[RMDB]
RNA sequence: GGGAACGACUCGAGUAGAGUCGAAAAUGGAAAGAGAUGCUAGGAGUAGGGAGAGACCGAAGCGAGGAGGAAAGCAAAGAAAGCAACGGGGCUAGCCGGUGGGUGUUCCGCCCCCCGAGAGGGGAAGAUACGAGCAGGUUCGCCUGCUCGAAAAGAAACAACAACAACAAC
Reactivity to DMS in 0.01 (KOAc 150mM, MgCl2 10mM, bicine 150mM(pH8.5), 24C), signal-to-noise 3, nucleotides 027 to 129: u040g020g000a000a000a000g010a050g020a080u070g020c070u060a100g030g000a070g000u020a070g000g000g010a040g010a110g000a090c040c000g000a000a000g070c210g000a030g040g030a040g000g000a060a010a120g050c220a040a070a080g020a040a050a060g030c120a100a090c150g000g000g000g000c040u020a090g040c040c030g030g030u030g030g030g000u000g000u020u020c050c040g050c100c040c010c060c000c040g000a060g050a150g060g000g000g000a000a000g030a040u000a050
Reactivity to 2A3 in 0.01 (KOAc 150mM, MgCl2 10mM, bicine 150mM(pH8.5), 24C), signal-to-noise 3, nucleotides 027 to 129: u170g000g020a050a010a020g060a000g010a000u160g050c080u090a060g000g020a030g050u090a000g090g040g000a030g020a000g000a010c000c020g020a040a010g040c030g010a030g030g040a000g000g000a030a040a000g080c040a020a000a020g100a000a050a030g050c010a080a020c070g010g000g030g000c010u030a020g020c010c000g010g010u050g050g030g010u050g020u070u040c040c030g030c010c000c000c020c010c010g030a040g030a060g060g050g040g010a010a010g010a020u120a040

Description: An RNA of 170 nucleotides, treated with DMS and 2A3 and read out base by base. For 2A3 the reverse transcriptase was SuperScript II with manganese. Conditions: 150 mM KOAc, 10 mM MgCl2 and 150 mM bicine (pH 8.5), 24 C. The DMS profile rests on 11,760 reads. It was measured as part of the RMDB library 15KLIB.